Chemical mapping of a 207-nucleotide RNA with 2A3 and DMS.
The RNA was probed in 150 mM KOAc, 10 mM MgCl2 and 150 mM bicine (pH 8.5) at 24 C.

RNA sequence: GGGAACGACUCGAGUAGAGUCGAAAAGAUGUCAUUUGGUAAGGCUAUAUCAGGUGGCACGACAGGUACUAUGUCGCAUCAUGGUGCUUGUUAACUCGUAGCUUGAUGCGACAAGUUAUGAGUGAUCUAUUUUACUAUAGCCUUAGUGAGAUAGAGACUCCCCUAAUAGCUUCGGCUAUUAGGGGAGAAAAGAAACAACAACAACAAC
Reactivity to 2A3 in 0.01 (KOAc 150mM, MgCl2 10mM, bicine 150mM(pH8.5), 24C), signal-to-noise 3, nucleotides 027 to 156: g060a040u020g020u020c000a000u000u000u010g000g010u020a010a000g020g020c010u020a020u000a000u030c010a010g020g000u020g010g020c000a010c020g080a020c040a040g110g170u160a040c020u070a070u100g010u010c020g000c020a030u020c010a020u060g090g040u040g070c040u090u070g070u150u100a110a090c060u000c040g040u000a020g070c010u010u010g000a030u060g010c010g000a000c000a000a000g000u030u070a100u100g080a040g080u030g060a060u020c000u010a000u000u020u010u010a000c000u010a000u030a030g010c020c000u000u000a010g000u000g020a020g000a000u020a000g020a000g020a020
Reactivity to DMS in 0.01 (KOAc 150mM, MgCl2 10mM, bicine 150mM(pH8.5), 24C), signal-to-noise 2, nucleotides 027 to 156: g010a090u000g010u000c000a040u000u000u020g030g020u000a020a040g000g000c020u000a040u000a010u000c010a020g010g020u000g010g040c000a040c050g000a120c070a090g040g010u000a120c070u000a090u000g000u000c060g000c090a070u000c040a130u020g040g020u000g000c010u000u000g030u000u000a070a070c020u010c040g060u000a040g000c020u000u000g000a100u000g040c230g010a060c020a000a020g000u010u000a010u000g000a050g010u000g000a210u000c020u000a020u010u000u000u000a030c000u000a030u000a050g000c020c020u000u010a030g010u000g000a020g010a020u020a030g000a120g000a260

Source: RMDB library OK3TST, as collected in RNAgym.